[RMDB]
RNA sequence: GGGAACGACUCGAGUAGAGUCGAAAAGUAGGCAAAAAUUUACAACUAUCCAAGGCCCUCCUGGUAGCGGUAAAUCUCAUUGUGUUAUAGGUUUGGGUCUGUAUUAUCCUCAGGCGCGAAUAGUUUACACCGCAUGUUCUCAUGCUGCUGUAGACGCACAGAGAGAGAUAUUCGUAUCUCUCUCUGUAAAAGAAACAACAACAACAAC
Reactivity to 2A3 in 0.01 (KOAc 150mM, MgCl2 10mM, bicine 150mM(pH8.5), 24C), signal-to-noise 3, nucleotides 027 to 156: g020u030a020g000g050c050a050a030a040a110a090u070u120u060a050c020a080a030c020u070a050u140c060c040a070a100g030g020c040c020c010u100c020c000u020g040g000u020a010g000c030g020g020u050a060a070a070u070c080u060c080a120u110u070g040u030g080u190u130a120u080a160g070g090u070u090u080g040g010g000u000c010u000g010u020a080u100u080a080u130c020c040u020c030a030g020g020c030g000c000g120a040a040u060a070g000u000u000u010a000c000a000c040c030g000c010a000u020g050u140u090c140u050c050a000u010g000c000u000g000c020u000g000u000a010g000a000c010g000c020
Reactivity to DMS in 0.01 (KOAc 150mM, MgCl2 10mM, bicine 150mM(pH8.5), 24C), signal-to-noise 4, nucleotides 027 to 156: g030u000a060g020g020c050a020a050a060a090a060u000u010u010a040c020a040a040c020u000a030u000c020c040a080a060g020g020c050c030c050u000c040c020u000g020g010u000a010g020c050g010g050u020a020a020a030u010c040u010c070a150u000u000g010u000g000u000u010a100u000a060g020g020u000u000u010g010g020g020u000c020u000g000u000a050u000u000a110u000c070c050u000c030a090g010g020c030g020c010g010a060a070u000a060g020u000u000u000a040c000a060c010c100g020c030a050u000g010u000u000c170u000c010a070u000g020c000u000g020c030u010g020u000a040g000a100c080g020c200

Structure probing data (2A3 and DMS) for a 207-nucleotide construct. Reactivities are given for positions 27 through 156. Reactivities are rounded to 0.1 and cut off at 0 and 3. The reactions ran in a buffer of 150 mM KOAc, 10 mM MgCl2 and 150 mM bicine (pH 8.5), at 24 C. DMS adducts were read by reverse transcription with MarathonRT. It was measured as part of the RMDB library OK3TST. The DMS profile rests on 13,970 reads. The 2A3 profile rests on 3,222 reads.